[RMDB]
RNA sequence: GGGAACGACUCGAGUAGAGUCGAAAAAAAAGAUAUGGAAUACCGAACUACGCUAUGCAGACCAAUGAUGAUGUGUCGGAAACGACACAUUUGAGGUCUGUCAUAGCGCGGUAUUCCUAAGUCAAAAGUUAAUAUAAAGCUUCGGCUUUAUAUUAACAAAAGAAACAACAACAACAAC
Reactivity to DMS in 0.01 (KOAc 150mM, MgCl2 10mM, bicine 150mM(pH8.5), 24C), signal-to-noise 3, nucleotides 027 to 126: a090a060a120a070g010a010u000a190u010g000g000a010a000u000a000c000c000g000a100a060c160u050a300c030g020c010u010a000u000g000c030a010g000a010c000c000a300a160u030g010a080u000g000a000u000g010u000g010u000c010g000g000a030a030a040c010g000a010c000a000c000a010u000u000u000g000a040g000g030u000c000u000g010u010c010a000u000a000g020c000g030c000g000g010u000a000u000u000c000c000u000a010a050g000u000c010a110a090a190a170
Reactivity to 2A3 in 0.01 (KOAc 150mM, MgCl2 10mM, bicine 150mM(pH8.5), 24C), signal-to-noise 2, nucleotides 027 to 126: a000a000a030a050g010a010u050a000u070g010g010a020a000u000a000c010c000g030a080a060c100u170a030c300g000c000u000a000u000g030c000a000g010a000c000c030a160a300u060g000a010u040g020a000u010g000u000g000u010c010g020g000a030a010a000c010g000a000c000a000c000a010u000u010u000g000a010g000g010u010c000u010g000u020c000a000u000a000g000c000g000c000g000g000u010a000u000u000c000c010u000a020a000g000u000c010a080a000a080a190